[RMDB]
Structure probing data (2A3 and DMS) for a 207-nucleotide construct. DMS adducts were read by reverse transcription with MarathonRT. Source: RMDB library OK3TST, as collected in RNAgym. For 2A3, 1,485 sequencing reads were counted.
RNA sequence: GGGAACGACUCGAGUAGAGUCGAAAAUUCAAGGCAGCCGGCAGUGAUCUACGAUCAUGUUCCACGUGUGCCUGUGUGGAGGUUUGUUUUAAACGCCUGUUCGGCCAUGGAACCAAAAGUGAAGAUGGACCGCUCUAAAUCAGAGUUAGGGCGGAAACCAUAUUAGGAUGUUCGCAUCCUAAUAUGGAAAAGAAACAACAACAACAAC
Reactivity to 2A3 in 0.01 (KOAc 150mM, MgCl2 10mM, bicine 150mM(pH8.5), 24C), signal-to-noise 3, nucleotides 027 to 156: u050u010c020a010a000g020g020c030a020g060c070c030g000g030c030a040g050u000g040a040u010c040u160a060c160g010a030u030c020a010u050g100u120u050c060c010a090c070g010u080g040u100g050c000c020u050g030u000g010u030g030g060a060g020g020u100u090u050g070u070u070u070u120a020a160a000c010g030c000c000u010g060u070u120c000g000g000c010c000a030u030g000g050a020a040c000c040a020a040a060a050g060u050g080a040a020g030a080u080g010g040a040c010c000g030c000u000c000u020a120a180a140u230c080a020g030a010g150u040u070a020g020g000g000c000g000g030a030a000a000
Reactivity to DMS in 0.01 (KOAc 150mM, MgCl2 10mM, bicine 150mM(pH8.5), 24C), signal-to-noise 2, nucleotides 027 to 156: u000u010c040a040a010g000g020c040a120g020c050c060g010g030c070a180g020u000g010a030u000c010u010a100c140g020a050u000c010a030u010g030u000u000c030c030a060c090g000u020g030u000g030c020c020u000g020u010g030u000g000g000a100g000g020u000u000u000g010u040u000u010u000a050a060a120c040g020c020c010u000g030u010u000c090g040g000c000c030a080u000g040g000a110a070c040c060a040a050a100a180g020u000g010a110a160g000a160u000g000g000a150c000c000g000c000u000c010u000a060a060a160u000c150a180g010a160g030u010u010a050g010g000g020c030g010g000a010a050a110